About this RNA:
Chemical mapping of a 177-nucleotide RNA with 2A3 and DMS. The 2A3 profile rests on 1,809 reads. It was measured as part of the RMDB library OK2TST. Values cover nucleotides 27 to 126. For 2A3 the reverse transcriptase was SuperScript II with manganese.
RNA sequence: GGGAACGACUCGAGUAGAGUCGAAAAGCGCAUCGGGCGCAAGAACUGGCCGCGGUGCCGCCCGAUGCUGCGGCACAGCAUUGCAGAGGAUGUUCCGGACGGACGGCGCGGCCUGGUCUGGCGCGGCUAUGCUUCUACCGUUCGCGGUAGAAGCAUAAAAAGAAACAACAACAACAAC
Reactivity to 2A3 in 0.01 (KOAc 150mM, MgCl2 10mM, bicine 150mM(pH8.5), 24C), signal-to-noise 1, nucleotides 027 to 126: g030c060g000c060a130u110c100g150g100g000c000g050c020a030a000g000a020a000c050u010g000g000c000c000g000c000g000g080u000g000c000c000g000c010c000c000g060a110u190g010c030u030g000c000g010g010c020a010c000a010g000c010a020u000u130g040c090a060g080a070g280g090a060u040g030u060u000c010c040g020g040a070c220g150g060a070c020g010g000c020g000c020g010g000c000c000u000g010g040u000c000u010g010g000c000g000c000g050g010c060
Reactivity to DMS in 0.01 (KOAc 150mM, MgCl2 10mM, bicine 150mM(pH8.5), 24C), signal-to-noise 2, nucleotides 027 to 126: g000c090g000c050a120u020c110g030g030g020c000g010c020a050a030g000a030a070c020u000g000g010c010c000g020c000g000g030u000g010c020c010g010c000c050c130g010a160u000g000c070u000g020c020g000g000c030a080c020a010g000c030a030u000u000g020c090a150g010a190g000g000a020u000g020u000u000c000c010g000g010a170c170g010g010a280c000g010g000c020g000c020g010g000c010c010u010g010g000u000c010u000g020g000c010g000c010g020g030c080